[RMDB]
The record gives the reactivity of an RNA of 177 nucleotides to 2A3 and DMS. It was measured as part of the RMDB library OK2TST.
RNA sequence: GGGAACGACUCGAGUAGAGUCGAAAAUUCAUGCCAAAGUAUAACCAAAUGCCGACGGCUAAUGGUUCAAAUUUAAAUCAACCGCCAUUGAUUAGCGAAACUUAUCAGGCCGAAGCGCAGCAGCAUAAUUAGGACGUAGUUUCGACUACGUCCUAAUAAAAGAAACAACAACAACAAC
Reactivity to 2A3 in 0.01 (KOAc 150mM, MgCl2 10mM, bicine 150mM(pH8.5), 24C), signal-to-noise 2, nucleotides 027 to 126: u010u010c020a000u070g060c030c010a060a050a000g060u080a110u060a230a080c000c040a050a020a040u050g030c030c050g070a080c060g070g030c020u010a050a040u070g030g000u040u040c030a060a080a100u060u160u210a030a080a090u030c030a030a060c000c070g030c040c030a010u010u120g020a040u030u050a030g010c050g100a090a020a010c020u100u070a050u080c010a020g010g050c000c010g010a020a000g000c040g000c080a020g020c000a000g000c000a010u060a130
Reactivity to DMS in 0.01 (KOAc 150mM, MgCl2 10mM, bicine 150mM(pH8.5), 24C), signal-to-noise 3, nucleotides 027 to 126: u000u010c070a040u020g010c000c040a110a100a150g000u000a110u010a090a110c030c060a060a070a110u000g010c010c030g040a230c160g010g010c020u000a080a110u000g010g020u000u000c170a050a050a150u000u000u010a050a050a050u000c080a020a050c070c050g000c080c050a100u010u010g000a040u010u010a050g020c090g010a060a030a060c070u000u010a040u000c070a100g000g000c020c040g010a120a110g010c170g010c040a050g010c040a070g000c040a050u000a040
The RNA was probed in 150 mM KOAc, 10 mM MgCl2 and 150 mM bicine (pH 8.5) at 24 C.
For 2A3, 1,417 sequencing reads were counted.
The DMS profile rests on 1,869 reads.